[RMDB]
RNA sequence: GGGAACGACUCGAGUAGAGUCGAAAAAGGCACCCUACUACACCAUCUUACAUACAGAGUGGCUGAGUGGUACUCCUCAGAGCUCUGUCUGUCAACGCAGAGCUUACAGGAGUAGCGUUGUAAGAACUGCGUUGAUAGUUCUGUGAAUGCGGUGCCACGUCACAAGAAUGUUCGCAUUCUUGUGACGAAAAGAAACAACAACAACAAC
Reactivity to 2A3 in 0.01 (KOAc 150mM, MgCl2 10mM, bicine 150mM(pH8.5), 24C), signal-to-noise 3, nucleotides 027 to 156: a020g020g000c010a020c020c000c030u040a050c030u030a020c020a040c040c020a080u120c040u150u240a090c020a060u170a060c020a000g020a000g040u070g150g210c030u020g010a020g000u140g060g110u160a090c080u040c040c000u000c000a000g000a000g020c020u010c000u000g020u000c000u020g050u030c000a000a000c000g000c000a000g030a030g000c000u000u010a000c000a010g000g060a100g050u060a020g030c020g100u070u000g010u020a000a000g000a030a040c000u010g000c000g000u010u010g010a040u010a020g020u090u140c090u130g030u040g030a100a050u060g020c050g030g000u000g000c000c000a000
Reactivity to DMS in 0.01 (KOAc 150mM, MgCl2 10mM, bicine 150mM(pH8.5), 24C), signal-to-noise 2, nucleotides 027 to 156: a090g030g020c010a020c000c000c000u010a130c050u010a100c050a100c010c090a070u010c050u020u010a230c230a150u010a050c100a020g010a020g050u020g000g050c000u000g000a070g030u000g070g020u000a160c030u000c050c000u010c010a220g010a300g020c010u000c010u000g000u000c060u000g040u000c060a030a050c090g000c030a020g010a100g030c020u010u000a070c080a040g040g020a300g020u020a060g000c110g030u000u030g010u000a100a080g020a040a050c010u020g000c060g040u000u000g020a080u000a010g030u020u000c030u000g020u000g040a090a150u010g000c030g030g000u000g010c000c010a050